This 177-nucleotide RNA was probed chemically with 2A3 and DMS. The reactions ran in a buffer of 150 mM KOAc, 10 mM MgCl2 and 150 mM bicine (pH 8.5), at 24 C. The data come from the RNA Mapping Database (RMDB), library OK1LIB. Values cover nucleotides 27 to 126.
[RMDB]
RNA sequence: GGGAACGACUCGAGUAGAGUCGAAAACAAAGCCAGAUUCUCGUCCUGGCAAGGAACGGAUAAAACUUGAGGAAAACGAGAAAUCCACAGGAAAAAGCAGAAAAACUGCAAUCCGAAAACAAACAAACGUAUAUCCAUGGUUCGCCAUGGAUAUACGAAAAGAAACAACAACAACAAC
Reactivity to 2A3 in 0.01 (KOAc 150mM, MgCl2 10mM, bicine 150mM(pH8.5), 24C), signal-to-noise 5, nucleotides 027 to 126: c040a000a050a010g050c020c010a020g010a060u090u020c020u010c040g060u060c010c000u000g110g010c010a010a010g030g010a100a030c070g000g030a030u120a110a130a030a080c010u010u020g010a070g000g050a100a060a040a030c040g020a040g030a060a040a030u020c020c020a040c020a070g010g040a110a110a030a020a000g000c020a000g090a100a150a030a040a010c000u000g000c010a000a040u000c000c010g050a030a020a050a050c100a050a110a020c060a020a100a010
Reactivity to DMS in 0.01 (KOAc 150mM, MgCl2 10mM, bicine 150mM(pH8.5), 24C), signal-to-noise 3, nucleotides 027 to 126: c120a080a040a060g020c040c000a010g000a050u000u000c030u010c040g000u020c270c030u000g000g000c030a100a090g010g060a100a080c050g000g000a050u000a020a040a060a030c010u010u000g050a100g000g000a050a050a080a090c120g000a120g000a120a050a150u000c000c080a150c040a090g000g000a000a050a140a120a110g000c020a050g000a120a090a060a140a270c000u000g000c010a100a090u000c000c000g010a070a050a130a110c120a090a080a080c280a040a090a130